[RMDB]
RNA sequence: GGGAACGACUCGAGUAGAGUCGAAAAGAGUUGGACGUACCUCUAGUGUAUCAGUUGUGCCGCUAGGUGCAUUGCUGAGUAGCUACGUGCGGUCGAGAUAAGCGCUGAAAGCAUCUAAGCGCGAAACGCAAUAUGCACUCUUCGGAGUGCAUAUUGCAAAAGAAACAACAACAACAAC
Reactivity to DMS in 0.01 (KOAc 150mM, MgCl2 10mM, bicine 150mM(pH8.5), 24C), signal-to-noise 2, nucleotides 027 to 126: g000a100g000u010u000g000g000a000c000g020u000a030c050c030u010c010u010a000g010u000g000u020a300u000c010a040g020u020u010g000u000g070c000c020g010c290u020a080g000g050u010g020c020a030u010u000g030c010u000g010a040g000u000a300g000c020u030a000c220g000u000g010c000g000g000u000c020g000a060g000a170u010a070a170g010c000g000c000u000g000a100a080a160g050c130a060u010c040u000a100a060g000c000g050c010g020a060a030a060c200
The data come from the RNA Mapping Database (RMDB), library RFMREP. The record gives the reactivity of an RNA of 177 nucleotides to DMS. Conditions: 150 mM KOAc, 10 mM MgCl2 and 150 mM bicine (pH 8.5), 24 C.